[RMDB]
RNA sequence: GGGAACGACUCGAGUAGAGUCGAAAAAAGAAGAGGCAGAAGCUGAAGCACAACAAGUUGCAACUGCAGAACAAUCAUCUAAACAAUCUAACGAGCCAUAUGUGUUAGCAGUAACUGCUUGUCCAACAAUCGACUCGGUAUUCGUACCGAGUCGAUUAAAAGAAACAACAACAACAAC
Reactivity to DMS in 0.01 (KOAc 150mM, MgCl2 10mM, bicine 150mM(pH8.5), 24C), signal-to-noise 1, nucleotides 027 to 126: a050a050g000a140a000g050a020g020g000c060a000g000a140a300g030c000u000g000a140a100g000c000a000c010a030a210c200a000a100g020u110u000g000c050a220a160c000u000g000c020a000g000a060a050c110a150a010u120c120a070u050c140u170a190a020a090c190a040a000u110c080u010a210a030c100g050a150g000c000c070a090u000a140u000g000u000g000u000u000a050g040c000a000g000u000a010a110c080u000g000c000u000u000g000u000c000c120a030a040c200
Reactivity to 2A3 in 0.01 (KOAc 150mM, MgCl2 10mM, bicine 150mM(pH8.5), 24C), signal-to-noise 2, nucleotides 027 to 126: a000a020g220a070a000g020a000g040g000c000a000g020a000a030g000c030u020g000a020a000g000c000a000c000a050a080c030a030a030g050u050u030g060c010a100a110c060u090g000c000a000g090a080a010c140a100a060u250c070a010u090c150u300a220a060a040c010a030a140u050c050u100a060a040c050g070a080g030c020c000a160u100a110u100g030u000g010u000u100a120g080c000a000g000u030a210a000c020u040g000c000u020u070g010u060c000c010a040a000c050